Background: Conditions: 150 mM KOAc, 10 mM MgCl2 and 150 mM bicine (pH 8.5), 24 C. An RNA of 177 nucleotides, treated with DMS and 2A3 and read out base by base. It was measured as part of the RMDB library OK2TRN. For DMS, 985 sequencing reads were counted.
RNA sequence: GGGAACGACUCGAGUAGAGUCGAAAAAACGCGUUAUUUAAUGAUAAAAGAAAGUUCCGUGGGAAAGGAUUGCAGAAAAGAAUAACCGCGAAUACUUUUAACGCCUAUAUGAGCAGGGCAAGAAAGCCUUCCUCUUAUACUUCGGUAUAAGAGGAAGAAAAGAAACAACAACAACAAC
Reactivity to DMS in 0.01 (KOAc 150mM, MgCl2 10mM, bicine 150mM(pH8.5), 24C), signal-to-noise 2, nucleotides 027 to 126: a110a050c090g010c010g010u000u000a040u010u010u000a150a120u010g010a200u040a080a080a040a040g000a120a090a090g000u000u000c050c010g010u010g010g000g000a150a110a100g010g010a130u000u000g010c110a060g000a090a120a060a210g010a060a090u000a030a110c050c130g000c020g020a030a040u000a090c010u020u000u000u000a020a130c210g000c010c020u000a090u000a150u000g020a120g020c100a100g010g000g000c070a050a220g000a080a060a060g010c190
Reactivity to 2A3 in 0.01 (KOAc 150mM, MgCl2 10mM, bicine 150mM(pH8.5), 24C), signal-to-noise 2, nucleotides 027 to 126: a000a000c040g000c010g000u050u010a080u030u090u050a100a050u070g020a020u070a160a240a020a070g060a060a140a000g040u020u000c050c030g050u050g040g020g010a110a120a010g020g020a030u020u120g090c070a040g140a200a130a040a000g040a020a040u000a020a000c040c020g000c020g010a070a030u080a180c040u080u100u040u090a050a040c030g010c040c010u110a110u010a040u250g020a030g020c070a030g020g010g000c000a020a030g030a050a020a000g000c000